[RMDB]
RNA sequence: GGGAACGACUCGAGUAGAGUCGAAAAGGCCGCUGCUCGAUCGUGUGUCUCGAUCAUGCGCAUCUAUAGGCGCGAGGCGCUACGGCGCCGCGAGUCAGGUACGAUGCGCCUGAGGCCUAGCGCGGCCAAACGGCGAGUAUUUCGAUACUCGCCGUUUAAAAGAAACAACAACAACAAC
Reactivity to 2A3 in 0.01 (KOAc 150mM, MgCl2 10mM, bicine 150mM(pH8.5), 24C), signal-to-noise 2, nucleotides 027 to 126: g010g000c010c020g010c140u240g030c010u050c090g130a180u110c140g080u080g080u110g020u090c020u020c020g070a180u140c050a110u250g000c010g000c050a000u000c000u020a030u020a080g020g000c040g000c000g040a000g010g000c000g000c010u020a030c190g090g000c010g000c000c010g000c020g010a020g010u010c000a020g180g180u000a020c160g010a020u000g000c030g010c020c000u100g010a000g000g000c000c020u030a020g000c030g010c020g000g000c010c000
Reactivity to DMS in 0.01 (KOAc 150mM, MgCl2 10mM, bicine 150mM(pH8.5), 24C), signal-to-noise 2, nucleotides 027 to 126: g020g000c000c000g040c010u010g040c020u010c110g010a100u000c190g000u000g030u010g040u000c010u000c020g020a090u010c230a090u000g000c010g000c050a020u000c010u000a110u030a030g010g010c000g000c000g000a040g010g000c020g010c000u000a090c180g030g010c000g000c010c010g020c000g000a030g000u010c010a020g000g010u000a050c210g000a020u000g000c000g010c000c120u020g010a000g010g010c000c030u000a030g020c030g010c040g010g010c020c020